[RMDB]
RNA sequence: GGGAACGACUCGAGUAGAGUCGAAAACAGGAAUGGCGGGACCCCACUUCAACAGGGUCCGCGUUCCAUCCUUUCUUACCUGAUGGCCGGCAUGGUCCCAGCCUCCUCGCUGGCGCCGGCUGGGCAACAGAAUAUAUCAGUUCGCUGAUAUAUUCUGAAAAGAAACAACAACAACAAC
Reactivity to DMS in 0.01 (KOAc 150mM, MgCl2 10mM, bicine 150mM(pH8.5), 24C), signal-to-noise 5, nucleotides 027 to 126: c250a100g000g000a050a020u000g010g040c020g010g020g000a020c000c000c000c070a160c200u000u000c300a070a070c230a110g000g010g020u000c000c010g020c010g000u000u010c000c000a050u010c020c020u000u000u010c060u010u010a110c060c030u000g000a130u000g010g010c010c010g000g000c010a140u010g030g010u000c300c000c010a030g010c010c110u010c130c080u010c170g000c000u010g000g010c140g000c000c000g000g000c000u000g000g000g010c090a070a150
Reactivity to 2A3 in 0.01 (KOAc 150mM, MgCl2 10mM, bicine 150mM(pH8.5), 24C), signal-to-noise 3, nucleotides 027 to 126: c060a020g030g120a050a040u120g300g300c140g050g060g050a070c020c010c040c010a050c070u290u220c070a120a080c030a060g000g010g010u000c000c000g000c010g010u050u000c000c000a000u020c000c000u060u120u000c040u080u090a100c040c040u110g120a190u180g260g070c000c000g000g000c060a140u160g090g030u100c000c070c000a000g000c000c020u090c020c040u090c060g010c020u050g000g040c040g000c030c020g040g000c000u030g000g000g010c010a090a020